[RMDB]
RNA sequence: GGGAACGACUCGAGUAGAGUCGAAAAAAUUCAAAGCCCAUCGGUAUUUUCUUUCUCGAUAGAUGCAGUUCUCCUAGCGAAAUUCAGUUAUUUGCCUGUGCGUAAGGGGAAAAUAAUUGAUUUAUGAGUCAUUUAAAUGAUUCGUCAUUUAAAUGACAAAAGAAACAACAACAACAAC
Reactivity to 2A3 in 0.01 (KOAc 150mM, MgCl2 10mM, bicine 150mM(pH8.5), 24C), signal-to-noise 2, nucleotides 027 to 126: a000a000u270u200c080a080a080a050g010c030c030c010a020u030c020g030g000u070a050u040u120u130u020c020u010u140u020c050u020c030g060a090u040a170g070a040u100g050c040a020g010u050u030c030u010c010c030u060a030g030c020g100a070a090a070u070u030c000a000g050u050u020a080u010u020u030g050c000c010u090g030u110g070c010g070u100a070a060g000g000g000g030a000a010a000a040u070a010a000u020u010g000a000u060u020u160a170u160g090a020
Reactivity to DMS in 0.01 (KOAc 150mM, MgCl2 10mM, bicine 150mM(pH8.5), 24C), signal-to-noise 3, nucleotides 027 to 126: a100a100u010u010c050a060a120a210g000c010c030c020a050u000c060g040g010u000a020u000u000u000u000c050u000u000u000c030u000c040g030a100u010a050g010a110u000g020c030a120g000u010u010c030u000c020c060u000a120g000c110g010a040a040a060u010u000c010a020g000u000u000a010u000u000u000g000c030c000u000g030u000g030c250g010u030a120a080g010g010g000g010a040a010a010a020u000a000a020u000u010g000a050u000u000u000a070u000g000a260
An RNA of 177 nucleotides, treated with 2A3 and DMS and read out base by base.
Conditions: 150 mM KOAc, 10 mM MgCl2 and 150 mM bicine (pH 8.5), 24 C.
For 2A3 the reverse transcriptase was SuperScript II with manganese.
As a SHAPE reagent, 2A3 marks flexible, mostly unpaired nucleotides at the ribose 2'-OH.
For DMS the reverse transcriptase was MarathonRT.